Chemical mapping of a 170-nucleotide RNA with 2A3 and DMS. DMS adducts were read by reverse transcription with MarathonRT. Values cover nucleotides 27 to 129. The DMS profile rests on 105,606 reads. The RNA was probed in 150 mM KOAc, 10 mM MgCl2 and 150 mM bicine (pH 8.5) at 24 C.
RNA sequence: GGGAACGACUCGAGUAGAGUCGAAAACAUCAGAUCGUGGCCAGGAAAGUUUAGCUAGGUCUGCAUGUGUUUAUUAUUCUCAAGUCUUGUGUAAAUCAAUUCUUUUGGUUGACUCAAGUUUGGUUACGUACACUAAGGUUCGCCUUAGUGAAAAGAAACAACAACAACAAC
Reactivity to 2A3 in 0.01 (KOAc 150mM, MgCl2 10mM, bicine 150mM(pH8.5), 24C), signal-to-noise 9, nucleotides 027 to 129: c000a010u040c000a000g010a000u000c040g300u210g020g000c030c040a080g120g220a190a170a080g140u180u210u200a030g000c010u010a020g000g010u000c000u010g030c040a010u030g010u000g010u020u050u000a040u020u030a040u060u020c020u000c000a050a080g110u020c020u020u030g010u010g000u060a020a010a030u020c010a020a030u140u250c080u110u190u030u020g020g000u020u010g030a050c010u000c030a000a000g010u020u070u080g090g000u080u100a030c050g010u040a010
Reactivity to DMS in 0.01 (KOAc 150mM, MgCl2 10mM, bicine 150mM(pH8.5), 24C), signal-to-noise 9, nucleotides 027 to 129: c000a020u000c000a030g000a020u000c000g010u030g020g000c020c140a140g050g020a120a100a140g020u040u050u030a090g030c010u020a150g000g000u030c000u010g010c270a020u000g000u030g010u010u000u010a030u030u040a140u010u010c020u010c000a060a120g020u040c040u040u000g020u010g000u000a030a020a010u020c010a000a000u030u060c190u000u030u010u010g000g000u000u000g000a020c060u030c000a000a010g010u000u000u000g030g000u010u040a050c060g000u060a180